[RMDB]
RNA sequence: GGGAACGACUCGAGUAGAGUCGAAAAGUCGAUCGUCAGCACUACGACUGAACUAAAGUCCCUGGAGUAUAGGGAGAGUUCUGUGUGAGAGUUUCUCGCACGUAGUGGGCUCGAUCGAGAAACUCUCGCAGUGCACUGUAUUCGUACAGUGCACUGCAAAAGAAACAACAACAACAAC
Reactivity to DMS in 0.01 (KOAc 150mM, MgCl2 10mM, bicine 150mM(pH8.5), 24C), signal-to-noise 5, nucleotides 027 to 126: g000u000c010g000a040u000c020g020u010c090a260g010c010a050c030u000a020c020g020a300c170u000g010a020a030c010u010a080a120a160g010u000c000c000c010u000g010g020a230g020u020a100u010a010g000g010g010a070g010a050g010u000u000c010u000g000u000g010u000g000a010g000a110g020u020u010u000c000u000c000g020c050a140c030g000u010a030g020u000g000g000g040c110u000c010g010a060u000c000g010a010g000a030a050a080c090u010c020u000c050
Reactivity to 2A3 in 0.01 (KOAc 150mM, MgCl2 10mM, bicine 150mM(pH8.5), 24C), signal-to-noise 3, nucleotides 027 to 126: g080u000c000g020a010u010c010g070u050c050a020g090c010a090c050u020a000c000g170a120c070u050g000a010a010c000u050a190a070a160g180u030c000c000c000u020g080g160a270g120u300a140u280a150g000g000g000a060g010a010g020u040u000c020u030g060u020g000u020g010a020g000a040g040u000u220u100c000u000c000g020c010a020c000g010u020a000g010u020g000g020g020c040u000c020g010a040u020c000g000a000g010a000a010a000c020u020c010u000c040